[RMDB]
RNA sequence: GGGAACGACUCGAGUAGAGUCGAAAACCGACUAUGGUGAUAAACGGACGGUGUAAUAAACCCAUUGGACCCGGGGGCGGUACCCGGCGCCUCCACCACAGCACAGCUUGCCGAUCAGGCUGUGUUGACAUCAUCCAAUUUUCGAAUUGGAUGAUGUAAAAGAAACAACAACAACAAC
Reactivity to 2A3 in 0.01 (KOAc 150mM, MgCl2 10mM, bicine 150mM(pH8.5), 24C), signal-to-noise 9, nucleotides 027 to 126: c000c000g030a020c040u090a090u170g040g040u060g080a130u110a150a160a030c050g030g030a010c020g010g020u040g030u050a070a110u110a160a110a050c020c010c010a040u040u120g060g020a100c040c040c040g010g000g000g000g000c020g010g020u060a060c010c010c000g010g000c010g000c000c000u010c000c000a040c030c020a040c010a010g000c000a000c000a000g000c000u020u020g060c070c050g160a220u210c020a010g000g000c000u000g000u000g000u000u000g000
Reactivity to DMS in 0.01 (KOAc 150mM, MgCl2 10mM, bicine 150mM(pH8.5), 24C), signal-to-noise 7, nucleotides 027 to 126: c010c000g010a150c120u020a060u010g000g010u010g010a090u010a060a100a100c120g010g000a070c030g010g010u000g010u010a090a080u020a050a130a110c100c010c020a080u010u010g010g010a090c090c080c070g010g000g020g000g010c050g000g010u010a060c030c030c030g010g000c040g000c010c000u000c010c010a090c120c080a160c010a000g000c010a010c010a010g000c000u000u000g000c220c170g000a120u030c020a010g000g010c000u000g010u000g010u000u000g000